[RMDB]
RNA sequence: GGGAACGACUCGAGUAGAGUCGAAAAGGGUUCUUCCGGUCCGCCAGCUUUCAGAUGAUGCUUCCAGGAGUCCUGGUGCCCAGAAGGGGCCUCAGGGCUGCUGGGGAGAAGAGGGGAAGCAGGAGCCCCUAUUCUAGCAAUUCGUUGCUAGAAUAGGAAAAGAAACAACAACAACAAC
Reactivity to 2A3 in 0.01 (KOAc 150mM, MgCl2 10mM, bicine 150mM(pH8.5), 24C), signal-to-noise 2, nucleotides 027 to 126: g040g010g000u050u040c020u120u040c050c020g030g030u040c030c030g040c060c040a030g010c040u060u070u060c060a100g000a300u170g020a030u110g100c010u060u000c000c000a040g020g040a000g050u010c000c010u010g000g010u020g000c000c000c010a070g300a180a070g040g020g000g000c000c010u000c000a000g000g000g000c000u010g010c000u000g010g010g010g030a060g010a030a010g030a040g000g040g000g010a000a010g000c020a050g030g050a030g020c030c000
Reactivity to DMS in 0.01 (KOAc 150mM, MgCl2 10mM, bicine 150mM(pH8.5), 24C), signal-to-noise 5, nucleotides 027 to 126: g010g010g010u010u000c050u000u000c050c050g010g020u010c040c050g020c040c030a090g000c040u000u000u010c030a070g000a140u010g000a160u010g000c020u000u000c000c000a020g000g000a020g020u000c000c000u000g010g000u000g010c000c000c000a300g030a120a180g040g010g000g010c000c020u000c010a000g020g000g010c010u000g000c000u000g000g000g000g000a030g000a060a050g010a170g000g000g000g000a030a030g020c040a080g000g000a170g000c080c060